[RMDB]
RNA sequence: GGGAACGACUCGAGUAGAGUCGAAAAUGGUUUCCCUGGCCAAUCCACUUGUAAUGUGUAUUUUGUAAAUAACGCAAAAUGUGCAUUAGAAGUGGAUUGGUCAAGAGAACCGCACUUGUGCAAAAUAUUUCCCAAUUACAUUCGUGUAAUUGGGAAAAAAAGAAACAACAACAACAAC
Reactivity to 2A3 in 0.01 (KOAc 150mM, MgCl2 10mM, bicine 150mM(pH8.5), 24C), signal-to-noise 1, nucleotides 027 to 126: u120g000g000u030u040u090c000c060c000u000g000g020c000c000a000a000u000c000c000a000c000u010u070g110u130a000a000u000g010u000g000u020a010u000u000u000u000g010u000a070a180a250u190a180a000c060g000c010a000a000a000a000u000g000u000g030c030a000u000u010a010g030a010a000g010u000g000g000a000u000u000g000g000u000c010a000a000g000a000g010a000a000c030c000g100c010a020c070u160u120g080u070g140c070a070a060a140a020u180a190
Reactivity to DMS in 0.01 (KOAc 150mM, MgCl2 10mM, bicine 150mM(pH8.5), 24C), signal-to-noise 5, nucleotides 027 to 126: u030g000g000u010u000u010c030c010c030u000g000g000c000c000a000a000u000c010c000a010c010u000u000g010u000a010a000u000g010u000g000u000a000u000u000u000u000g010u000a120a100a170u050a160a170c260g000c000a000a000a020a010u000g020u000g020c000a000u000u000a010g000a020a010g020u000g000g010a010u000u000g000g010u000c000a000a000g000a140g010a020a020c010c000g020c140a060c140u000u000g020u000g010c110a130a070a070a070u030a150
The record gives the reactivity of an RNA of 177 nucleotides to 2A3 and DMS. For 2A3 the reverse transcriptase was SuperScript II with manganese.